Chemical mapping of a 207-nucleotide RNA with 2A3. The reactions ran in a buffer of 150 mM KOAc, 10 mM MgCl2 and 150 mM bicine (pH 8.5), at 24 C.
[RMDB]
RNA sequence: GGGAACGACUCGAGUAGAGUCGAAAAAAGGAGGGGUGAACCGGCCCAGGUCGGAAACGGAGCAGGUCAAAACUCCCGUGCUGAUCAGUAGUGGGAUCGCGCCUGUGAAUAGCCACUGCACUCCAGCCUGUGCAACAUAGCGAGACCCCGUCUCUUUGAAUGAAUAAUCGUUCGCGAUUAUUCAUUCAAAAGAAACAACAACAACAAC
Reactivity to 2A3 in 0.01 (KOAc 150mM, MgCl2 10mM, bicine 150mM(pH8.5), 24C), signal-to-noise 2, nucleotides 027 to 156: a010a030g130g000a060g000g030g000g010u030g020a070a010c020c030g060g000c020c030c010a030g000g030u070c030g010g020a060a180a020c040g010g030a030g020c040a010g000g000u040c030a020a050a110a220c060u000c000c030c010g020u020g000c030u060g070a250u210c180a050g020u080a050g090u080g010g040g000a030u050c050g010c060g030c110c030u050g000u030g060a150a150u150a090g040c020c030a050c040u100g040c040a030c040u000c040c010a010g010c000c010u010g030u020g000c000a030a060c030a180u170a070g040c030g020a070g050a100c010c010c000c010g060u020c020u030c000u030u000u010